RNA sequence: GGGAACGACUCGAGUAGAGUCGAAAACAAGUACAUCAUACAAUACAUGAUCAACUGCUCUGAUUACAUUGUUAAUGGAAAUUACACCAAGACUAUCUAAAUACUUAAGAACUUCAUAUCUAAAUACAGAACAAUAGAGGUUCGCCUCUAUUGUUCUAAAAGAAACAACAACAACAAC
Reactivity to DMS in 0.01 (KOAc 150mM, MgCl2 10mM, bicine 150mM(pH8.5), 24C), signal-to-noise 2, nucleotides 027 to 126: c240a020a080g020u010a090c110a040u010c090a070u020a040c010a060a050u010a100c110a090u030g010a040u000c020a030a110c110u040g020c060u010c030u000g000a040u020u000a040c110a020u000u020g000u020u040a140a060u000g020g000a130a070a060u080u000a020c120a120c030c020a020a160g000a090c080u000a030u000c080u000a040a020a040u040a020c100u000u000a090a070g020a040a040c030u000u000c080a050u000a080u010c120u000a000a000a040u010a070c190
Reactivity to 2A3 in 0.01 (KOAc 150mM, MgCl2 10mM, bicine 150mM(pH8.5), 24C), signal-to-noise 5, nucleotides 027 to 126: c030a020a040g040u040a030c010a060u080c050a070u030a090c020a050a030u040a060c090a060u060g020a020u000c010a040a080c070u100g020c010u020c020u050g030a010u070u000a030c040a030u000u060g020u050u060a040a010u060g050g000a010a040a060u140u080a070c050a020c020c020a050a010g100a130c040u010a080u060c010u090a140a060a090u180a140c020u090u150a060a010g020a030a020c030u120u090c070a050u100a140u230c060u120a020a110a080u140a070c060

The record gives the reactivity of an RNA of 177 nucleotides to DMS and 2A3. The RNA was probed in 150 mM KOAc, 10 mM MgCl2 and 150 mM bicine (pH 8.5) at 24 C. It was measured as part of the RMDB library OK1LIB. For DMS, 2,419 sequencing reads were counted. 2A3 adducts were read by reverse transcription with SuperScript II with manganese. DMS adducts were read by reverse transcription with MarathonRT.